[RMDB]
RNA sequence: GGGAACGACUCGAGUAGAGUCGAAAACAUCCGUGUAAGGUACCCCGUUCCAACGUUUGAUGGGACAAUUUCAUCGCCAAACAUGUAUGCAAGCGUUCGGCAAUGAUCAGCAAUUGCAUAAAUAGAUUCAAGCGGUUCAAGUAAGUCAGUGAGGACGCACACCAGGGAGAUUCGUCUCCCUGGUGUGAAAAGAAACAACAACAACAAC
Reactivity to 2A3 in 0.01 (KOAc 150mM, MgCl2 10mM, bicine 150mM(pH8.5), 24C), signal-to-noise 2, nucleotides 027 to 156: c000a070u130c050c050g070u120g120u240a080a090g000g000u070a070c010c000c010c010g010u040u000c020c020a080a090c090g110u120u090u180g070a060u080g010g030g000a050c040a030a030u010u060u160c120a110u050c040g030c010c040a000a050a050c050a040u120g080u190a000u040g000c010a040a030g040c020g050u060u100c050g050g000c090a050a100u150g020a150u040c020a000g030c030a040a260u080u040g010c020a040u010a030a090a000u080a010g040a020u110u100c040a020a010g040c010g100g000u090u140c030a070a060g010u040a030a030g050u060c020a010g000u060g180a120g100g000a030c100g000